RNA sequence: GGGAACGACUCGAGUAGAGUCGAAAAGAUACCGCUACGGCCCGCGCUGAAUUGGAUGCGGUCGAGGCGGCUCGAAUCGCCGCGGAGAAGGACUGCGAGACCCGCCGUCAGAUCGCUGCUGGCGCCGCUAACCGAAUGGAUUCGUCCAUUCGGUUAGAAAAGAAACAACAACAACAAC
Reactivity to 2A3 in 0.01 (KOAc 150mM, MgCl2 10mM, bicine 150mM(pH8.5), 24C), signal-to-noise 4, nucleotides 027 to 126: g000a020u120a080c000c000g000c050u050a020c030g050g000c040c080c030g000c030g010c040u170g120a300a260u250u210g130g090a090u150g020c010g000g000u010c000g010a060g000g000c000g010g000c000u020c030g080a090a070u080c020g000c010c010g000c050g050g030a130g040a080a050g090g040a080c020u020g000c030g020a090g010a080c020c000c010g000c010c010g020u000c000a020g030a200u040c010g010c030u040g010c030u110g010g010c020g000c010c010g020
Reactivity to DMS in 0.01 (KOAc 150mM, MgCl2 10mM, bicine 150mM(pH8.5), 24C), signal-to-noise 5, nucleotides 027 to 126: g010a150u010a080c040c010g030c080u000a210c060g010g000c020c030c060g030c030g000c040u010g000a130a130u000u010g000g010a100u010g020c000g020g020u000c010g000a270g010g010c010g000g010c100u000c190g010a070a120u000c070g010c030c060g000c030g000g010a090g000a130a100g000g000a090c040u000g020c010g000a090g000a140c220c020c060g010c020c030g000u000c020a110g000a060u000c040g010c040u000g000c030u000g020g010c030g020c060c140g020
The data come from the RNA Mapping Database (RMDB), library OK2TRN. Chemical mapping of a 177-nucleotide RNA with 2A3 and DMS. The reactions ran in a buffer of 150 mM KOAc, 10 mM MgCl2 and 150 mM bicine (pH 8.5), at 24 C. 2A3 adducts were read by reverse transcription with SuperScript II with manganese. DMS adducts were read by reverse transcription with MarathonRT.